Conditions: 150 mM KOAc, 10 mM MgCl2 and 150 mM bicine (pH 8.5), 24 C. An RNA of 177 nucleotides, treated with DMS and 2A3 and read out base by base. For DMS, 3,715 sequencing reads were counted. For 2A3 the reverse transcriptase was SuperScript II with manganese.

RNA sequence: GGGAACGACUCGAGUAGAGUCGAAAACUGUUCCCCUUCAUCAGGGGUGUAAAUGAUGGUCUUCCUGUCUUCCCAUGCACCUCCCUUAGGACCAGAGCAGGUGGGAGAUGUCUUCACAGGAGGGUUCUAUGCCAUGCAAUUUCGAUUGCAUGGCAUAAAAAGAAACAACAACAACAAC
Reactivity to DMS in 0.01 (KOAc 150mM, MgCl2 10mM, bicine 150mM(pH8.5), 24C), signal-to-noise 3, nucleotides 027 to 126: c110u000g000u000u000c010c000c000c020u010u000c080a030u010c170a070g000g020g000g020u000g000u010a040a070a050u000g010a060u000g010g000u000c000u000u000c000c010u000g000u000c160u000u000c010c000c010a160u000g000c000a050c030c020u000c010c020c050u010u020a190g020g000a130c060c040a150g010a150g030c170a080g010g010u010g010g000g010a020g010a030u000g000u000c080u000u010c150a050c000a030g010g000a040g020g000g000u000u010c070
Reactivity to 2A3 in 0.01 (KOAc 150mM, MgCl2 10mM, bicine 150mM(pH8.5), 24C), signal-to-noise 1, nucleotides 027 to 126: c060u040g080u100u090c000c000c000c000u110u070c030a170u010c040a000g000g020g010g000u080g070u100a050a130a080u120g040a030u120g050g000u020c020u000u020c000c000u000g020u050c020u050u050c000c020c010a000u030g010c010a010c000c010u010c000c020c000u030u110a080g000g200a060c030c000a030g020a020g030c050a030g000g000u070g050g030g000a060g000a000u020g050u000c080u160u120c080a010c030a000g000g010a010g000g020g030u060u040c030
High 2A3 reactivity points to a flexible backbone, as in loops and unpaired stretches.